[RMDB]
RNA sequence: GGGAACGACUCGAGUAGAGUCGAAAAAGGCUUCCUCCUUUGGAUCCUAGUUAUUUUGGGCCUGGUCUUAUACACAACGGUAGUCCAGUGGUAAUUUCAGUAUAAGAAGGAAAUCACCAUAUUGCAGACCGUCUUAUAGAUUCGUCUAUAAGACGGUAAAAGAAACAACAACAACAAC
Reactivity to DMS in 0.01 (KOAc 150mM, MgCl2 10mM, bicine 150mM(pH8.5), 24C), signal-to-noise 9, nucleotides 027 to 126: a040g010g010c110u020u010c090c050u000c020c030u000u000u000g010g020a110u010c010c020u000a070g010u010u010a080u010u000u020u010g010g000g000c030c020u000g020g010u000c010u000u000a030u010a040c050a040c080a100a110c150g010g010u010a070g010u010c020c030a100g020u000g000g020u000a040a020u000u010u000c010a060g010u010a060u010a050a050g010a070a070g000g000a010a010a010u000c040a030c000c010a070u020a100u020u030g010c160a130g000
Reactivity to 2A3 in 0.01 (KOAc 150mM, MgCl2 10mM, bicine 150mM(pH8.5), 24C), signal-to-noise 9, nucleotides 027 to 126: a000g040g010c020u070u010c000c000u030c010c000u070u050u050g040g010a040u050c010c020u020a060g070u110u130a220u120u120u100u100g040g000g010c010c010u030g020g000u010c010u010u100a080u030a030c070a010c030a120a080c070g070g020u060a040g040u040c020c030a040g020u010g030g010u030a050a050u020u040u020c030a020g040u050a090u060a260a040g100a050a030g080g010a010a030a010u030c020a010c010c010a030u070a100u090u180g030c030a030g030

Conditions: 150 mM KOAc, 10 mM MgCl2 and 150 mM bicine (pH 8.5), 24 C.
This 177-nucleotide RNA was probed chemically with DMS and 2A3.
For 2A3 the reverse transcriptase was SuperScript II with manganese.